[RMDB]
RNA sequence: GGGAACGACUCGAGUAGAGUCGAAAAAAUAGUACAAUGAAUACACCAGUGUAUCCUGUUCCUAAACCAGAUGGAAGGUGGAGAAUGGUAUUAGAUUAUAGAGAAGUAAAUAAAACUAUUCCAUUAAUCCUAUUGCAGAAUUCGUUCUGCAAUAGGAAAAAGAAACAACAACAACAAC
Reactivity to DMS in 0.01 (KOAc 150mM, MgCl2 10mM, bicine 150mM(pH8.5), 24C), signal-to-noise 1, nucleotides 027 to 126: a050a010u010a030g010u000a070c140a120a020u010g000a190a040u010a090c070a050c110c040a010g020u030g010u000a060u000c030c020u000g010u010u000c000c000u010a020a080a130c190c210a100g000a130u000g010g000a020a010g000g020u010g010g010a060g020a060a060u010g000g000u000a050u000u000a040g000a080u000u010a100u000a100g000a130g000a080a080g010u000a010a040a090u000a060a030a030a040c000u000a030u000u000c030c010a070u020u000a050a160